[RMDB]
RNA sequence: GGGAACGACUCGAGUAGAGUCGAAAAGAUAUGGAACGUGCAAGGUAUAUGCCUACCCACCUCGGAAACGAGAGGGCAUGUACUGAUGACCACGUUCCUAAGUCAAACUUUAGGUUCGCCUAAAGAACUUUGGUUUAAUGUUCGCAUUAAACCAAAGAAAAGAAACAACAACAACAAC
Reactivity to 2A3 in 0.01 (KOAc 150mM, MgCl2 10mM, bicine 150mM(pH8.5), 24C), signal-to-noise 3, nucleotides 027 to 126: g070a010u240a100u300g000g020a010a010c000g000u000g000c020a120a180g000g000u020a010u010a010u020g000c000c030u150a260c060c010c010a020c000c000u000c000g000g040a120a080a030c010g000a000g020a020g020g000g000c000a000u000g010u000a010c010u010g070a260u070g010a010c030c000a010c000g000u000u000c000c000u010a030a020g070u030c150a140a070a130c020u030u010u020a020g030g030u050u070c300g160c060c000u020a020a010a030g020a070a100
Reactivity to DMS in 0.01 (KOAc 150mM, MgCl2 10mM, bicine 150mM(pH8.5), 24C), signal-to-noise 5, nucleotides 027 to 126: g010a100u010a170u000g020g010a020a010c000g030u000g000c010a050a050g010g020u010a010u000a000u000g010c000c010u000a130c030c020c020a300c160c010u000c000g010g000a130a070a190c010g000a010g010a090g000g020g010c000a000u000g000u000a010c000u000g000a030u030g000a100c300c000a000c000g000u000u000c000c000u000a010a040g000u020c100a100a060a180c000u000u000u000a010g000g000u010u010c210g020c000c010u000a000a010a010g010a110a190
The record gives the reactivity of an RNA of 177 nucleotides to 2A3 and DMS. The reactions ran in a buffer of 150 mM KOAc, 10 mM MgCl2 and 150 mM bicine (pH 8.5), at 24 C. The data come from the RNA Mapping Database (RMDB), library TTRDEL. DMS adducts were read by reverse transcription with MarathonRT. For 2A3, 9,788 sequencing reads were counted. For 2A3 the reverse transcriptase was SuperScript II with manganese. Values cover nucleotides 27 to 126.